[RMDB]
RNA sequence: GGGAACGACUCGAGUAGAGUCGAAAAGCCGGGUUGCGGCCUAAAACAGGGGCCGUGGGGUCGGCGGGGUCCCAGGGUGAAGGGAGGGAUUCCCGCGAUUCGGACAGCGACGCGACAGCGGGGCGCGUGAAGCGCACCUCUUCGGAGGUGCGCUUCAAAAAGAAACAACAACAACAAC
Reactivity to 2A3 in 0.01 (KOAc 150mM, MgCl2 10mM, bicine 150mM(pH8.5), 24C), signal-to-noise 1, nucleotides 027 to 126: g080c000c020g000g000g000u020u130g000c000g000g000c010c060u220a190a160a000a060c060a160g020g000g080g000c030c000g020u010g000g000g000g000u080c020g110g190c000g000g000g030g010u020c000c010c010a010g060g050g100u160g140a030a070g050g020g010a100g060g100g000a040u140u290c040c000c000g000c010g030a010u080u020c060g030g030a000c080a110g000c080g010a000c010g000c010g030a110c040a020g050c010g000g050g000g060c000g000c000g020
Reactivity to DMS in 0.01 (KOAc 150mM, MgCl2 10mM, bicine 150mM(pH8.5), 24C), signal-to-noise 1, nucleotides 027 to 126: g000c000c000g000g010g000u000u030g050c000g000g000c000c000u000a070a040a160a090c230a080g000g000g000g000c040c000g010u000g000g000g000g000u000c000g120g100c040g010g000g090g050u000c080c000c050a240g020g000g010u020g000a070a120g000g000g000a210g010g040g040a160u000u050c000c000c000g000c070g000a050u040u010c170g000g000a070c210a120g010c100g000a110c080g000c020g000a020c300a140g000c050g040g000g000g000c020g000c000g030
This 177-nucleotide RNA was probed chemically with 2A3 and DMS. The 2A3 profile rests on 462 reads. The DMS profile rests on 1,039 reads. The RNA was probed in 150 mM KOAc, 10 mM MgCl2 and 150 mM bicine (pH 8.5) at 24 C.